This 207-nucleotide RNA was probed chemically with 2A3. 2A3 adducts were read by reverse transcription with SuperScript II with manganese. The RNA was probed in 150 mM KOAc, 10 mM MgCl2 and 150 mM bicine (pH 8.5) at 24 C.

RNA sequence: GGGAACGACUCGAGUAGAGUCGAAAAGGCCGUAGGCAUGAAGGUUUCUGUGCUUAUCACCAUAACCUUGGCGGUAUGCCACGUAACCGCAAGACCCACUUCUAGCUGCGUCACUUCUCCAAGUAACAACAGUAGCGAGGAAGACGGCAGCGGCUGGCAGGUAACGACUGUUCGCAGUCGUUACCUGAAAAGAAACAACAACAACAAC
Reactivity to 2A3 in 0.01 (KOAc 150mM, MgCl2 10mM, bicine 150mM(pH8.5), 24C), signal-to-noise 1, nucleotides 027 to 156: g070g020c040c010g070u100a110g010g000c020a000u030g120a090a000g040g040u000u140u030c070u140g030u040g010c010u030u100a030u160c000a020c030c010a010u040a180a150c010c090u020u030g050g010c020g010g000u030a000u010g080c080c030a010c020g010u010a000a040c010c000g010c020a010a040g030a120c010c020c010a020c040u020u000c000u030a000g010c000u020g020c000g000u010c020a050c130u040u030c000u000c020c040a080a010g080u100a170a130c120a030a080c020a130g100u120a000g060c030g040a050g020g050a020a000g000a020c060g000g000c030a020g000c000g000g000c000u010g000g070
The data come from the RNA Mapping Database (RMDB), library OK3TST. For 2A3, 693 sequencing reads were counted.